[RMDB]
RNA sequence: GGGAACGACUCGAGUAGAGUCGAAAAAUAUAUGUGCCUUGCUAUGAACGCGUUCAUUUUUAAGUGACCGGACCCUAAAAUAUUCAGGUAGCAUGACGGAAGCUAUGAAUUAAUCCUGGUGGAGGGGGUAUUAUUCUUACUUCGGUAAGAAUAAUACAAAAGAAACAACAACAACAAC
Reactivity to 2A3 in 0.01 (KOAc 150mM, MgCl2 10mM, bicine 150mM(pH8.5), 24C), signal-to-noise 1, nucleotides 027 to 126: a010u120a010u050a060u120g060u060g080c020c000u020u010g020c050u060a020u160g020a100a020c040g040c020g090u040u000c010a050u020u000u060u180u300a100a060g010u000g040a020c000c020g100g040a100c000c000c000u130a080a120a070a030u180a080u110u110c000a000g000g070u040a010g000c050a040u080g070a030c050g050g000a070a000g010c030u000a060u120g000a000a020u090u060a000a030u000c010c020u070g000g070u070g000g020a030g000g020g000g070
Reactivity to DMS in 0.01 (KOAc 150mM, MgCl2 10mM, bicine 150mM(pH8.5), 24C), signal-to-noise 3, nucleotides 027 to 126: a080u020a090u020a060u010g020u000g020c000c010u000u000g010c060u010a080u000g010a070a100c110g040c090g010u010u000c030a030u000u020u030u010u010a040a220g010u000g000a080c040c030g000g020a130c070c010c030u000a070a050a100a060u000a060u000u010c030a060g010g000u000a060g010c000a070u010g010a070c060g020g020a120a110g010c020u000a050u000g020a060a050u000u010a160a120u000c040c030u000g010g010u000g000g000a080g000g000g000g000